RNA sequence: GGGAACGACUCGAGUAGAGUCGAAAACGGCGGCAAACCGGAGGAGGCUGUUGCCACCCGCGUCGUGCUCGGCCCCGGCACGGGCCUUGGCGUGGCAGGUCUGGUUCGCACACGUCAUGCAUGGGUACGUCCCAUCAGUGUUCGCACUGAUGGGACGAAAAGAAACAACAACAACAAC
Reactivity to DMS in 0.01 (KOAc 150mM, MgCl2 10mM, bicine 150mM(pH8.5), 24C), signal-to-noise 1, nucleotides 027 to 126: c140g000g040c060g000g010c050a020a050a050c060c040g000g020a120g000g010a090g020g000c030u000g010u000u000g010c010c020a090c020c000c010g010c270g040u000c020g020u000g070c010u010c150g000g000c010c000c010c100g000g000c070a040c060g000g000g020c030c130u000u000g000g010c060g040u000g020g010c020a030g000g020u000c000u000g020g000u000u020c080g000c110a110c090a300c030g010u000c030a070u000g000c080a010u000g000g000g010u000a150
Chemical mapping of a 177-nucleotide RNA with DMS.
Reactivities are given for positions 27 through 126.